[RMDB]
RNA sequence: GGGAACGACUCGAGUAGAGUCGAAAACUGAAUACUAAUAUACAUCGUUAUCAUGAAUACACUUUCUUUGUGUGAUUACGAUCAUCGUGACCACGAUGCGUUCUUUAGCUAUAUUGAAGUUUUAGUCACAAUAUCAGGAAAGCUGGAGCCUCAUGAGCCUGGUUCAGUGUUUCGACACUGAACCAGGAAAAGAAACAACAACAACAAC
Reactivity to 2A3 in 0.01 (KOAc 150mM, MgCl2 10mM, bicine 150mM(pH8.5), 24C), signal-to-noise 1, nucleotides 027 to 156: c000u000g010a100a050u260a210c170u150a140a020u160a000u030a220c020a130u070c000g040u050u110a010u050c000a000u040g090a070a030u090a130c020a010c010u080u120u170c030u170u150u170g030u020g010u010g080a080u180u070a010c040g040a030u130c100a100u000c020g040u020g080a080c020c000a010c000g000a000u020g000c000g060u070u060c010u050u050u070a080g010c000u030a050u010a100u300u010g120a040a000g060u010u000u160u190a060g020u010c000a000c000a070a040u060a040u150c070a020g070g000a040a000a000g000c080u000g000g040a030g020c000c000u060c000a030u000g070a030g000
Structure probing data (2A3) for a 207-nucleotide construct. The RNA was probed in 150 mM KOAc, 10 mM MgCl2 and 150 mM bicine (pH 8.5) at 24 C. For 2A3 the reverse transcriptase was SuperScript II with manganese.